[RMDB]
RNA sequence: GGGAACGACUCGAGUAGAGUCGAAAACAACUUUGGCCGGCUCGGAAUAGAAUCAGGGGGUGCAAACUGCCCACUGGCAGAAAGGAUUAUAGCAAAUGCGUACCCUAUUGCAAUACAGCCCGGCCAACAUAGACUACUCUAUUCGUAGAGUAGUCAAGAUGUCUUCGGUAUUCGUACCGAAGACAUCAAAAGAAACAACAACAACAAC
Reactivity to 2A3 in 0.01 (KOAc 150mM, MgCl2 10mM, bicine 150mM(pH8.5), 24C), signal-to-noise 2, nucleotides 027 to 156: c000a000a010c010u110u000u020g000g000c000c000g010g000c010u030c110g050g070a110a070u160a110g070a070a030u180c050a060g020g010g000g000g000u080g030c030a070a050a040c000u030g000c000c030c050a200c150u190g030g000c000a000g070a060a080a040g110g060a120u180u130a170u260a160g020c040a000a150a100u030g000c040g040u070a070c000c010c000u050a150u000u110g020c080a040a060u070a170c000a030g030c110c050c020g020g000c010c000a000a010c000a000u040a020g000a000c000u000a000c000u000c000u010a040u030u070c170g060u050a000g000a000g000u000a000g000u000c000a000a000

This 207-nucleotide RNA was probed chemically with 2A3.
2A3 adducts were read by reverse transcription with SuperScript II with manganese.
Values cover nucleotides 27 to 156.